[RMDB]
RNA sequence: GGGAACGACUCGAGUAGAGUCGAAAAAAGACAAUUUGCAAAUUGCUAACAUUUCCACUUUUAAUGGUGGUGGUUACAAUUUCACUAAUUUGAUGGGUACAACGUACUCAACCAAAUCUGUUGUCGAGGACAUUUUGUUUGACAAAGUCGUCACAAGGUUGGACUUCUGAUUCGUCAGAAGUCCAACAAAAGAAACAACAACAACAAC
Reactivity to 2A3 in 0.01 (KOAc 150mM, MgCl2 10mM, bicine 150mM(pH8.5), 24C), signal-to-noise 1, nucleotides 027 to 156: a000a000g050a020c030a070a040u100u030u150g000c030a020a040a020u030u030g020c080u050a000a000c020a090u040u180u130c020c010a060c060u120u180u140u170a290a180u300g020g010u000g000g020u010g000g000u010u000a000c000a000a000u000u000u000c040a030c100u150a020a020u060u090u040g030a020u010g000g000g000u010a010c020a110a050c300g020u000a000c050u000c020a000a050c150c020a020a020a020u100c080u050g000u010u000g010u070c030g020a130g050g030a010c000a010u000u120u060u000g000u010u150u210g030a020c000a030a140a020g060u230c150g080u010c040a000c020a110a080g080

This 207-nucleotide RNA was probed chemically with 2A3. For 2A3, 398 sequencing reads were counted. The data come from the RNA Mapping Database (RMDB), library OK3TST. The reactions ran in a buffer of 150 mM KOAc, 10 mM MgCl2 and 150 mM bicine (pH 8.5), at 24 C.